This 177-nucleotide RNA was probed chemically with DMS and 2A3. The reactions ran in a buffer of 150 mM KOAc, 10 mM MgCl2 and 150 mM bicine (pH 8.5), at 24 C. Reactivities are rounded to 0.1 and cut off at 0 and 3. Reactivities are given for positions 27 through 126. For DMS, 1,164 sequencing reads were counted.

RNA sequence: GGGAACGACUCGAGUAGAGUCGAAAACUUGGAUUGUUCGCAAUCCAAGAAAUCCCAGGGAACGACUCGAGUAGUGUCGAAAAUCCCACUCAACUCAAACAAAAAGGCACUUGUUCGCAAGUGCCAACAUCACUGAUCUGUUCGCAGAUCAGUGAUGAAAAGAAACAACAACAACAAC
Reactivity to DMS in 0.01 (KOAc 150mM, MgCl2 10mM, bicine 150mM(pH8.5), 24C), signal-to-noise 1, nucleotides 027 to 126: c000u000u000g000g000a040u010u000g010u000u000c150g030c000a000a000u000c000c000a000a000g000a000a060a060u000c000c000c040a150g000g000g000a060a090c010g000a000c020u000c030g000a060g020u030a050g000u000g010u000c000g000a040a100a100a050u010c010c010c000a100c130u010c170a120a020c080u000c060a090a060a040c130a030a080a110a190a040g010g010c000a000c030u000u000g010u020u020c160g030c000a020a000g010u000g010c010c000a000a040
Reactivity to 2A3 in 0.01 (KOAc 150mM, MgCl2 10mM, bicine 150mM(pH8.5), 24C), signal-to-noise 1, nucleotides 027 to 126: c000u000u000g010g000a000u010u010g010u030u050c080g050c040a000a000u000c000c000a010a000g010a040a020a000u000c040c010c000a040g000g000g000a040a030c020g000a010c000u000c020g020a030g070u120a010g000u000g010u020c000g030a060a010a000a000u020c000c010c020a020c010u050c000a030a130c020u050c160a030a090a190c080a040a140a050a010a030g000g000c010a000c000u010u010g040u100u120c160g010c090a020a010g000u000g020c000c000a010a000